[RMDB]
RNA sequence: GGGAACGACUCGAGUAGAGUCGAAAAUGGCCUAGUCUGUGUCCUUGCGGAGGCUGGCUUUGCUGUUUGAGGUUUUGGUCCUUUAGGACAGGGGACUGCCUUCCUGGAAAGUGGUCUCCGGUUGUUCUUAUAUCAUCGCAUUCGUGCGAUGAUAUAAAAAAGAAACAACAACAACAAC
Reactivity to DMS in 0.01 (KOAc 150mM, MgCl2 10mM, bicine 150mM(pH8.5), 24C), signal-to-noise 2, nucleotides 027 to 126: u010g010g010c000c070u000a010g030u020c020u010g010u010g000u010c010c000u010u020g020c130g000g010a030g000g000c010u010g010g030c020u000u000u000g000c010u000g000u000u000u020g000a150g000g010u000u000u040u040g020g030u000c000c010u020u020u030a090g030g030a080c090a110g030g000g000g000a000c000u000g010c030c040u000u010c090c090u010g000g000a000a030a060g010u010g000g000u000c000u010c000c010g020g020u000u010g000u030u000c050
Reactivity to 2A3 in 0.01 (KOAc 150mM, MgCl2 10mM, bicine 150mM(pH8.5), 24C), signal-to-noise 2, nucleotides 027 to 126: u050g030g030c000c020u020a000g000u010c040u040g050u030g120u000c010c010u050u180g050c080g020g030a020g020g060c010u030g070g000c000u000u020u030g030c010u000g080u030u060u080g100a040g020g080u050u080u130u290g050g000u030c010c000u040u110u130a140g020g030a010c030a040g010g000g000g000a010c000u020g000c000c000u010u030c010c050u050g030g130a030a010a020g010u010g010g000u010c000u000c010c010g020g000u000u000g000u000u000c000